[RMDB]
RNA sequence: GGGAACGACUCGAGUAGAGUCGAAAACAGAGGGAGGAAUCCACACGGAGUAGAGCAGAGAAAUCACCUCCAGAGGACCCCUUCAGCGAACAGAGAGCGCUGCGAGCGAGGAGUAAGACCAUAGCGAGUAUUGCUGAAUGUUCGCAUUCAGCAAUACAAAAGAAACAACAACAACAAC
Reactivity to 2A3 in 0.01 (KOAc 150mM, MgCl2 10mM, bicine 150mM(pH8.5), 24C), signal-to-noise 2, nucleotides 027 to 126: c030a000g030a030g040g010g000a150g040g040a120a110u000c010c000a030c020a020c130g000g030a020g040u150a070g030a040g070c130a020g050a010g050a170a080a060u050c010a020c030c010u030c000c010a000g020a020g020g020a010c000c000c000c000u010u030c020a010g010c020g000a040a020c020a040g060a010g000a000g090c020g010c010u030g000c020g020a040g000c030g000a020g020g030a040g020u060a080a000g040a030c020c010a060u100a010g040c040g040a020
Reactivity to DMS in 0.01 (KOAc 150mM, MgCl2 10mM, bicine 150mM(pH8.5), 24C), signal-to-noise 2, nucleotides 027 to 126: c110a120g020a120g010g010g000a110g020g010a080a110u000c000c000a070c250a300c200g000g030a030g000u000a170g020a060g000c100a150g020a050g010a100a020a150u000c030a050c150c000u000c000c010a040g010a280g000g000a090c020c020c020c000u000u000c040a040g030c010g000a040a060c040a030g010a110g020a040g010c030g010c100u000g020c070g010a120g000c020g000a030g010g010a030g000u010a040a050g020a120c070c030a110u000a110g000c110g050a120